[RMDB]
RNA sequence: GGGAACGACUCGAGUAGAGUCGAAAACUGAAAGUGGUGAUUACACCCUUGCCAAUACUACAACAGAACCACUCAAACUUUUUGCUGCUGAGACUUUACGUGCCACUGAAGAGGCGUCUAAGCAGUCCUACACGUUUGUUCGCAAACGUGAAAAGAAACAACAACAACAAC
Reactivity to DMS in 0.01 (KOAc 150mM, MgCl2 10mM, bicine 150mM(pH8.5), 24C), signal-to-noise 9, nucleotides 027 to 129: c020u000g020a060a060a030g010u060g030g010u020g000a150u000u020a130c080a030c010c010c020u000u000g050c070c070a080a090u040a120c030u030a010c060a070a000c060a000g000a060a040c000c010a050c050u040c090a070a090a100c040u020u000u010u020u040g000c020u040g030c030u020g000a000g000a080c040u030u030u030a030c150g050u060g030c030c000a070c100u020g040a150a090g040a080g050g050c040g000u010c020u030a070a020g020c000a000g030u020c030c030u040a060
Reactivity to 2A3 in 0.01 (KOAc 150mM, MgCl2 10mM, bicine 150mM(pH8.5), 24C), signal-to-noise 9, nucleotides 027 to 129: c050u060g060a090a020a000g120u130g040g010u030g030a100u070u170a100c030a060c010c010c000u040u060g040c020c010a070a040u080a120c040u020a030c020a090a000c010a030g030a050a020c020c010a030c020u050c040a080a140a140c040u060u060u030u110u150g010c000u000g000c000u010g010a000g000a040c010u120u130u120a120c160g100u140g010c000c020a080c080u140g060a090a020g060a070g100g010c010g010u000c000u010a030a010g000c000a000g000u020c000c000u040a030